Source: RMDB library RNAMAK, as collected in RNAgym.
An RNA of 207 nucleotides, treated with DMS and 2A3 and read out base by base.
2A3 adducts were read by reverse transcription with SuperScript II with manganese.

RNA sequence: GGGAACGACUCGAGUAGAGUCGAAAAACCAUUUUCGAAUGGUACGCUGGGGUCAAGGGAGAGCCGACGGAGGCAUCGAUCCUGAAGCCUCCACGGGGGAGCCUCCCAAGGCUCGACGAUCUUGACGGAGGCACCCUUAGACCAGAUUCGUCUGGAACAUAUACACUCCGUUCGCGGAGUGUAUAUGAAAAGAAACAACAACAACAAC
Reactivity to DMS in 0.01 (KOAc 150mM, MgCl2 10mM, bicine 150mM(pH8.5), 24C), signal-to-noise 1, nucleotides 027 to 156: a030c000c000a040u020u000u010u020c150g020a040a010u010g010g010u000a040c060g060c020u000g020g000g030g000u000c000a030a030g010g000g010a100g050a100g040c040c010g010a300c290g000g020a000g040g000c030a180u000c110g000a130u010c050c010u010g010a060a140g040c060c030u000c030c030a040c040g010g000g040g000g010a080g010c010c000u010c040c010c010a040a120g000g000c040u000c020g000a060c110g000a050u000c030u000u000g010a070c050g020g000a300g000g000c020a220c000c020c020u000u000a100g010a100c000c030a040g000a050u000u010c170g010u010c020u000g000g010a100a300
Reactivity to 2A3 in 0.01 (KOAc 150mM, MgCl2 10mM, bicine 150mM(pH8.5), 24C), signal-to-noise 3, nucleotides 027 to 156: a010c000c000a040u050u040u070u050c130g160a070a010u010g010g010u040a050c100g010c030u090g030g060g060g020u000c010a010a000g020g010g000a020g010a000g010c000c010g010a020c020g000g010a000g010g000c020a090u280c030g060a090u060c000c020u040g100a180a110g100c040c030u040c010c070a020c030g010g000g000g010g000a010g010c010c000u010c000c010c000a040a010g000g020c010u000c000g000a020c010g000a010u000c010u000u020g000a010c010g020g080a030g010g010c010a020c000c010c000u030u150a090g020a100c010c000a030g010a040u060u090c170g100u020c130u040g000g010a050a010
Overview: DMS adducts were read by reverse transcription with MarathonRT.